This 207-nucleotide RNA was probed chemically with DMS and 2A3. The data come from the RNA Mapping Database (RMDB), library OK3TST.

RNA sequence: GGGAACGACUCGAGUAGAGUCGAAAACAUGCUCGACAUGAGCUUCGCCUCGGUCAUCUCACCCCCGUCAGCAGUCUCCUUUGCAAACUUCUCCGCCGUCGCCUCAACCAUCGCGAGCAUAUGAGGUGGGAGCAUGGCAAUCGACGUGCCAAUCAUGUCAGACUCUAGUAUUCGUACUAGAGUCUGAAAAAGAAACAACAACAACAAC
Reactivity to DMS in 0.01 (KOAc 150mM, MgCl2 10mM, bicine 150mM(pH8.5), 24C), signal-to-noise 2, nucleotides 027 to 156: c020a100u000g010c020u000c020g040a100c060a050u000g030a090g000c040u000u030c060g010c040c000u000c020g020g000u000c060a130u000c030u020c020a160c010c020c000c070c060g020u000c010a100g000c000a080g000u010c010u000c030c010u000u000u000g000c000a090a060a120c050u000u010c030u020c010c010g000c050c020g000u000c020g000c020c030u000c070a070a130c050c060a080u000c080g000c070g020a170g040c060a120u000a230u000g010a050g020g040u010g000g010g000a110g030c070a060u000g020g010c010a060a100u010c080g040a030c090g040u000g000c010c060a040a140u000c040a130u000g000
Reactivity to 2A3 in 0.01 (KOAc 150mM, MgCl2 10mM, bicine 150mM(pH8.5), 24C), signal-to-noise 2, nucleotides 027 to 156: c040a030u060g000c010u030c020g090a100c090a170u140g030a020g000c000u040u060c040g000c000c000u030c020g050g000u030c030a030u010c050u020c030a090c020c030c000c000c000g060u010c010a010g000c000a030g010u000c000u010c010c000u020u110u080g040c000a000a090a140c020u090u050c020u060c040c030g000c000c000g090u070c010g030c010c000u010c000a050a070c000c020a030u050c040g010c040g110a020g070c020a020u020a090u200g010a030g010g000u010g000g080g000a030g000c030a050u060g040g000c000a040a100u080c060g020a040c020g010u050g020c010c010a080a110u210c070a040u030g000